Chemical mapping of a 177-nucleotide RNA with 2A3 and DMS. The DMS profile rests on 7,496 reads. For 2A3 the reverse transcriptase was SuperScript II with manganese. The 2A3 profile rests on 9,636 reads.
RNA sequence: GGGAACGACUCGAGUAGAGUCGAAAAGAUAUGGAUCAUUGAUCAGCAAGGAUUCUACUCGGAAACGAGUAAUAUCUGAUGACCUUCCCAAUGAUCCUAAGUCAAAAGUCUGCCUUCGGGCAGACAAGGUCAACUAUAUGUUCGCAUAUAGUUGACCAAAAGAAACAACAACAACAAC
Reactivity to 2A3 in 0.01 (KOAc 150mM, MgCl2 10mM, bicine 150mM(pH8.5), 24C), signal-to-noise 3, nucleotides 027 to 126: g010a010u030a010u090g000g000a000u010c010a000u000u030g040a040u170c110a030g100c090a180a260g000g020a000u060u000c020u080a010c000u000c000g000g020a040a020a010c010g000a000g020u010a010a030u060a010u030c030u050g080a190u190g080a170c030c000u080u060c030c050c000a000a000u010g000a010u000c000c000u000a050a020g010u030c020a090a040a040a170g010u000c010u000g000c010c000u010u090c290g040g000g000c000a010g010a000c020a000a020
Reactivity to DMS in 0.01 (KOAc 150mM, MgCl2 10mM, bicine 150mM(pH8.5), 24C), signal-to-noise 6, nucleotides 027 to 126: g010a030u010a220u000g000g000a010u000c000a010u000u000g000a070u000c130a060g020c130a120a160g010g000a040u000u000c100u010a000c000u000c010g000g010a060a050a100c010g000a010g000u000a010a040u000a020u000c010u000g000a120u010g000a140c170c050u010u010c180c100c010a020a020u000g010a010u000c000c010u000a030a100g000u000c030a090a090a120a150g010u000c000u000g010c000c000u000u010c210g030g000g020c010a010g010a000c010a030a050